Structure probing data (2A3) for a 177-nucleotide construct.
RNA sequence: GGGAACGACUCGAGUAGAGUCGAAAACAGUCAUCUUUUCCACACCUGCAGCUACCACAACAUCAUGGUAUCCGGAAGCUACAGCCAUGAUUCCUUGUCUAAGUGCCAAUCCUCCAGAUGCACAAGCACGCGCUAUGACUUUCGAGUCAUAGCGCGUAAAAGAAACAACAACAACAAC
Reactivity to 2A3 in 0.01 (KOAc 150mM, MgCl2 10mM, bicine 150mM(pH8.5), 24C), signal-to-noise 2, nucleotides 027 to 126: c060a000g070u090c020a010u100c060u030u090u100u000c040c000a120c000a030c000c010u030g030c020a020g000c010u010a000c000c010a010c030a130a030c050a040u080c000a030u010g010g010u070a120u000c060c030g070g010a110a030g000c020u070a120c020a020g000c020c000a010u060g020a030u090u140c040c020u010u150g050u060c020u060a180a000g010u070g100c010c000a010a070u000c000c000u000c010c010a000g010a050u060g050c020a020c020a090a000g010c020
As a SHAPE reagent, 2A3 marks flexible, mostly unpaired nucleotides at the ribose 2'-OH.